[RMDB]
RNA sequence: GGGAACGACUCGAGUAGAGUCGAAAAGGAUCCUUCGUAGUCAGGGUAACUGCCUCCAGUACAGUUACCAGUGAAGACUAGUCAAGGUGUCAUCGUACUGGAGGAUGACGUCUUGAAUUAAGGAUCGCUACAACAUAGUAUUCGUACUAUGUUGUAGAAAAGAAACAACAACAACAAC
Reactivity to DMS in 0.01 (KOAc 150mM, MgCl2 10mM, bicine 150mM(pH8.5), 24C), signal-to-noise 9, nucleotides 027 to 126: g010g000a000u000c000c000u000u000c230g010u000a010g020u000c000a180g000g010g010u000a010a010c010u000g010c110c030u010c190c180a110g010u010a220c010a010g000u000u000a010c000c000a100g010u010g010a100a130g010a020c010u000a090g000u000c000a010a010g010g000u000g000u000c000a010u000c010g020u010a120c150u000g000g010a090g010g000a010u000g000a010c010g010u000c000u000u000g000a030a080u010u010a030a010g020g000a010u000c000g000
Reactivity to 2A3 in 0.01 (KOAc 150mM, MgCl2 10mM, bicine 150mM(pH8.5), 24C), signal-to-noise 7, nucleotides 027 to 126: g030g000a000u000c000c000u010u040c080g090u020a010g000u000c020a020g080g000g000u000a000a000c000u010g010c000c020u040c030c020a030g030u080a030c000a000g000u000u000a000c000c010a010g020u030g080a200a030g010a010c000u010a020g050u010c000a010a000g000g000u000g010u000c000a010u010c010g080u070a060c060u130g130g050a050g100g010a010u000g000a000c000g010u000c000u000u000g000a010a010u080u060a020a000g000g000a000u000c000g000
This 177-nucleotide RNA was probed chemically with DMS and 2A3. The reactions ran in a buffer of 150 mM KOAc, 10 mM MgCl2 and 150 mM bicine (pH 8.5), at 24 C. Reactivities are given for positions 27 through 126.